[RMDB]
RNA sequence: GGGAACGACUCGAGUAGAGUCGAAAAGAAAGAAAUCACUAAUCGGAUCAAAGCGGAUUAUGUAACUGAGCAAUGAGUGAUCUACGAAUAACUCGUAGUGAGUGAUCCAAUAUCCGUAUUAGAGAAAGGGUAUGAAUGUGUUCGCACAUUCAUACCCAAAAGAAACAACAACAACAAC
Reactivity to DMS in 0.01 (KOAc 150mM, MgCl2 10mM, bicine 150mM(pH8.5), 24C), signal-to-noise 2, nucleotides 027 to 126: g060a050a130a090g040a040a220a090u010c070a140c020u000a000a010u000c000g020g000a030u000c300a120a050a040g010c300g000g000a020u010u030a040u010g000u040a200a000c010u000g010a100g000c290a090a050u000g000a110g000u000g000a100u020c050u030a070c020g000a000a050u020a020a260c160u000c000g000u010a000g020u000g040a200g000u040g000a000u050c030c000a070a200u000a000u020c020c000g030u050a020u000u000a000g000a030g000a000a090a080
Reactivity to 2A3 in 0.01 (KOAc 150mM, MgCl2 10mM, bicine 150mM(pH8.5), 24C), signal-to-noise 3, nucleotides 027 to 126: g160a030a120a010g110a010a090a050u100c010a000c060u000a010a010u000c000g000g020a000u040c110a080a160a010g200c100g010g000a000u000u000a040u060g110u120a060a010c010u020g130a010g170c100a170a140u220g010a050g090u060g010a050u040c010u010a000c020g020a030a100u110a140a020c040u030c020g020u010a000g030u010g030a000g020u040g010a000u000c010c000a030a000u050a000u000c000c000g130u250a000u000u030a040g040a000g070a040a070a090